[RMDB]
RNA sequence: GGGAACGACUCGAGUAGAGUCGAAAAGUCAGACUUCGGUCUGACAGCCACACCGUACGCGGUGUGGCACGAAUCCGGUGACGGAUUCGAGUCCGACUUCGGUCGGACAACCGCAGACGGUGACGUCUGCGGAAGAUGUGCGUGAGCACAUCAGCGUGCUCUUCGGAGCACGCAAGAAUGUUCGUGAGAACAUUCAACCACUAACGUGAGUUAGUGGAACCGACCACUACGGUGGUCGGAAUUGUGGUGCAUACAAUAAUGCAUAUAACGUCGAGUUCGCUCGACGUAAAAGAAACAACAACAACAAC
Reactivity to 2A3 in 0.01 (KOAc 150mM, MgCl2 10mM, bicine 150mM(pH8.5), 24C), signal-to-noise 5, nucleotides 027 to 266: g000u000c000a000g000a000c000u030u160c300g080g000u000c000u000g000a000c000a000g000c000c000a000c000a000c010c000g040u070a020c300g030c010g140g000u000g000u010g000g000c010a000c010g000a000a000u000c000c000g030g060u100g040a020c010g000g000a000u000u000c000g010a050g000u000c010c000g010a000c010u040u040c190g100g000u000c010g000g000a000c000a010a040c000c000g000c000a000g000a000c000g040g060u080g020a030c010g000u010c000u010g000c000g000g000a000a040g010a000u000g000u000g000c000g030u090g080a020g000c000a000c000a000u000c010a000g000c000g000u000g000c010u000c020u040u080c270g060g000a000g010c000a000c000g000c000a000a040g000a000a000u000g000u000u010c020g030u050g070a070g000a020a000c000a000u000u000c000a020a070c010c000a000c000u000a000a000c000g070u060g110a100g010u030u000a000g000u010g000g000a000a010c000c000g000a000c000c000a000c000u030a030c290g140g000u010g000g000u000c000g000g030a020a050u170u100g050u070g100g030u030g010c010a010u020a060c020a100a270u160a170a020u070g010c020a030u100a030u140a190
Reactivity to DMS in 0.01 (KOAc 150mM, MgCl2 10mM, bicine 150mM(pH8.5), 24C), signal-to-noise 2, nucleotides 027 to 266: g000u010c000a000g000a050c010u000u040c190g020g010u000c000u020g000a000c000a030g040c000c000a010c000a020c010c000g020u010a090c240g040c010g010g010u000g030u010g000g050c000a000c020g020a020a010u000c000c000g000g000u030g010a140c000g020g000a030u000u010c000g010a170g000u000c020c000g020a000c000u010u030c150g020g000u000c000g000g020a010c010a030a130c030c000g010c000a000g010a020c000g000g000u030g000a180c020g050u000c000u000g000c010g000g000a030a040g000a010u000g010u000g010c010g010u030g000a240g000c000a000c000a000u000c020a070g020c000g020u000g010c020u000c000u000u040c220g040g020a010g030c000a000c000g030c020a030a010g000a010a010u000g010u000u000c000g010u030g010a130g000a020a010c000a000u000u000c000a140a290c010c000a010c000u000a000a000c010g000u020g000a100g000u010u010a000g020u000g000g020a070a050c000c010g000a020c000c010a020c000u000a050c200g050g000u020g000g000u000c000g000g000a020a030u030u000g010u000g020g020u000g010c000a030u010a060c030a070a190u020a050a020u000g000c010a020u000a090u010a100